The data come from the RNA Mapping Database (RMDB), library OK2TST. An RNA of 177 nucleotides, treated with 2A3 and DMS and read out base by base. The reactions ran in a buffer of 150 mM KOAc, 10 mM MgCl2 and 150 mM bicine (pH 8.5), at 24 C. For DMS the reverse transcriptase was MarathonRT. For 2A3 the reverse transcriptase was SuperScript II with manganese. The DMS profile rests on 1,023 reads.
[RMDB]
RNA sequence: GGGAACGACUCGAGUAGAGUCGAAAAUCAACCUGGUCCCAACCCAAUGUUCGUCCGCGUCUCCACCGAAGGGACACUUAGAUUCCCGCUCUACCUCUUUAAGGAGCACACGUACAGGGUCCGGGCAAUUGGAUUGAUUCUUCGGAAUCAAUCCAAUAAAAGAAACAACAACAACAAC
Reactivity to 2A3 in 0.01 (KOAc 150mM, MgCl2 10mM, bicine 150mM(pH8.5), 24C), signal-to-noise 1, nucleotides 027 to 126: u090c000a020a070c000c010u000g000g050u070c020c010c030a110a250c080c040c030a000a080u080g020u050u080c070g000u060c120c060g070c000g060u050c010u050c030c000a090c040c000g040a030a040g000g020g050a010c020a000c090u030u060a040g090a180u130u080c020c020c020g060c000u000c000u060a140c020c000u090c050u040u030u080a090a020g020g000a000g020c050a000c010a000c010g000u040a000c000a060g000g040g040u000c020c040g030g010g090c020a030
Reactivity to DMS in 0.01 (KOAc 150mM, MgCl2 10mM, bicine 150mM(pH8.5), 24C), signal-to-noise 2, nucleotides 027 to 126: u010c160a110a120c000c010u000g020g000u000c000c010c020a190a170c020c000c030a160a300u000g010u000u000c080g010u000c080c070g040c030g000u000c010u000c010c020a090c170c160g000a040a020g030g040g010a100c060a040c250u030u000a050g010a090u000u010c020c010c020g040c300u000c030u020a070c120c030u000c030u000u000u010a060a060g000g010a030g000c060a060c040a030c030g000u000a040c040a060g010g040g000u000c030c060g030g010g010c200a080